This 207-nucleotide RNA was probed chemically with 2A3. For 2A3, 398 sequencing reads were counted. The reactions ran in a buffer of 150 mM KOAc, 10 mM MgCl2 and 150 mM bicine (pH 8.5), at 24 C.
RNA sequence: GGGAACGACUCGAGUAGAGUCGAAAAUGGCAUAUUUCUUUUGCCUUUCUGGUUAGUCGGUCUUUACAUAACUUUUAUUCUUCCAUAUCUUGUACUUAUGGCUAUCAACAUGAUCAUCAAAGGUCGCUCUGUCUGGGUUGACCGUAAGCUGAAGGACAGAACCUAUCCUCUUCGGAGGAUAGGUUCUAAAAGAAACAACAACAACAAC
Reactivity to 2A3 in 0.01 (KOAc 150mM, MgCl2 10mM, bicine 150mM(pH8.5), 24C), signal-to-noise 1, nucleotides 027 to 156: u100g020g000c050a080u050a000u120u150u180c030u050u120u020u020g020c030c000u040u040u020c090u020g040g000u030u090a030g030u020c080g020g000u040c090u060u060u010a080c060a040u100a180a090c020u180u130u190u180a060u250u210c060u060u000c000c000a050u010a080u270c060u110u130g120u060a090c000u040u020a060u160g000g000c000u000a000u250c070a040a060c020a140u030g150a000u160c040a000u020c040a030a050a100g010g020u000c020g000c000u000c030u050g130u090c120u080g040g000g090u040u300g010a000c000c040g000u000a020a020g060c000u020g030a040a000g000g000a010c000